[RMDB]
An RNA of 177 nucleotides, treated with DMS and 2A3 and read out base by base.
RNA sequence: GGGAACGACUCGAGUAGAGUCGAAAAUGUUCAAUGUCUAGACCAGUCCUUCAUUGCUGAUUUUAGGCUGAGAGGAACGUGCGUUUGCCCCUCCUCCGCAUUCACUGGCCAGACUCUCCAUGAUGGGCGGUAGGCAGGAAUUCGUUCCUGCCUACCGAAAAGAAACAACAACAACAAC
Reactivity to DMS in 0.01 (KOAc 150mM, MgCl2 10mM, bicine 150mM(pH8.5), 24C), signal-to-noise 1, nucleotides 027 to 126: u010g010u020u000c100a070a040u010g020u000c000u000a040g010a060c070c010a040g020u000c080c100u000u000c130a040u010u000g010c000u030g020a110u000u000u010u000a100g000g020c000u010g040a180g010a100g010g030a080a080c090g020u000g020c080g000u010u000u000g020c010c000c040c080u020c020c010u000c050c000g010c090a050u000u000c060a090c050u000g000g010c040c020a090g010a070c050u000c050u000c000c040a070u000g000a070u000g000g000g020
Reactivity to 2A3 in 0.01 (KOAc 150mM, MgCl2 10mM, bicine 150mM(pH8.5), 24C), signal-to-noise 1, nucleotides 027 to 126: u130g040u100u140c150a120a100u180g020u000c010u040a040g020a110c000c000a000g020u080c000c010u050u030c040a110u020u200g030c020u020g100a230u080u090u120u120a110g020g000c050u050g070a100g010a020g130g020a050a020c040g020u070g000c020g050u010u120u300g090c000c000c000c020u020c010c010u000c010c000g000c000a050u030u110c060a040c040u080g000g000c020c000a050g010a100c010u000c010u010c020c010a000u150g050a070u060g020g000g000
For 2A3, 908 sequencing reads were counted.